Description:
This 177-nucleotide RNA was probed chemically with DMS and 2A3. As a SHAPE reagent, 2A3 marks flexible, mostly unpaired nucleotides at the ribose 2'-OH. DMS adducts were read by reverse transcription with MarathonRT. The reactions ran in a buffer of 150 mM KOAc, 10 mM MgCl2 and 150 mM bicine (pH 8.5), at 24 C.
[RMDB]
RNA sequence: GGGAACGACUCGAGUAGAGUCGAAAAGACAUCGGGACUGAGACACUGCCCGGACUCCUACGGGAGGCUGCAGCAACGAAUCUUCCGCAAUGGGCGCAAGCCUGACGGAGCAAUGCCGCGUGCGGGACGAUACCGAUUACUUCGGUAAUCGGUAUCGAAAAGAAACAACAACAACAAC
Reactivity to DMS in 0.01 (KOAc 150mM, MgCl2 10mM, bicine 150mM(pH8.5), 24C), signal-to-noise 2, nucleotides 027 to 126: g020a090c160a040u000c040g000g020g000a180c120u020g070a080g030a170c120a080c120u000g040c010c010c030g000g010a080c080u000c000c050u010a230c100g020g010g000a040g030g010c050u000g010c020a030g030c060a100a060c080g000a070a100u000c140u000u000c000c000g010c040a100a060u000g000g010g000c000g000c280a110a190g010c010c000u000g000a090c020g020g010a020g010c150a030a090u000g020c000c000g050c060g010u000g000c100g020g000g000a090
Reactivity to 2A3 in 0.01 (KOAc 150mM, MgCl2 10mM, bicine 150mM(pH8.5), 24C), signal-to-noise 1, nucleotides 027 to 126: g040a000c060a090u050c030g060g000g080a140c090u070g030a050g030a110c030a000c040u070g000c000c000c000g000g010a020c010u010c000c010u020a060c160g080g040g010a000g030g020c000u110g000c030a050g000c040a070a040c020g050a030a060u030c030u100u030c030c000g050c030a040a120u090g020g000g000c000g000c040a040a010g000c000c000u010g000a030c040g000g000a000g040c070a110a030u190g020c000c000g000c010g030u070g050c020g050g030g010a010
For DMS, 994 sequencing reads were counted. 2A3 adducts were read by reverse transcription with SuperScript II with manganese.